Chemical mapping of a 177-nucleotide RNA with 2A3 and DMS. For 2A3 the reverse transcriptase was SuperScript II with manganese. Conditions: 150 mM KOAc, 10 mM MgCl2 and 150 mM bicine (pH 8.5), 24 C. DMS adducts were read by reverse transcription with MarathonRT.
RNA sequence: GGGAACGACUCGAGUAGAGUCGAAAAAAGGUAAUGGUGGUGUCUUUAAAGGUCAGUGCCGGACCCCAGUACGGAUCGUGAGCAAUCACGCCACCGAAGUAGAUAGAGGCAACCAGCAGCACGAUAAAAAUUAAAUAGGGUUCGCCCUAUUUAAUUUAAAAGAAACAACAACAACAAC
Reactivity to 2A3 in 0.01 (KOAc 150mM, MgCl2 10mM, bicine 150mM(pH8.5), 24C), signal-to-noise 2, nucleotides 027 to 126: a010a010g050g000u050a070a050u090g040g020u000g020g030u010g000u000c040u020u150u050a070a160a010g020g010u050c030a050g020u030g090c020c000g040g020a060c020c000c000c010a010g020u060a010c010g000g000a010u050c000g000u010g030a010g000c020a020a040u050c000a000c030g000c000c000a050c030c010g020a040a000g040u100a010g000a070u110a030g030a020g120g000c000a020a120c010c010a030g080c020a000g050c010a000c040g000a020u120a070a220
Reactivity to DMS in 0.01 (KOAc 150mM, MgCl2 10mM, bicine 150mM(pH8.5), 24C), signal-to-noise 6, nucleotides 027 to 126: a070a050g000g020u010a060a090u000g000g020u000g010g020u000g000u000c040u000u000u010a060a130a170g000g010u000c030a060g010u000g010c020c030g010g010a220c050c020c020c050a140g020u000a070c050g000g010a130u010c020g010u000g000a040g000c280a100a110u000c030a020c010g010c100c040a040c020c010g010a090a090g010u010a050g010a140u000a050g000a080g000g010c030a040a090c050c040a050g010c030a030g000c090a040c070g010a090u000a030a080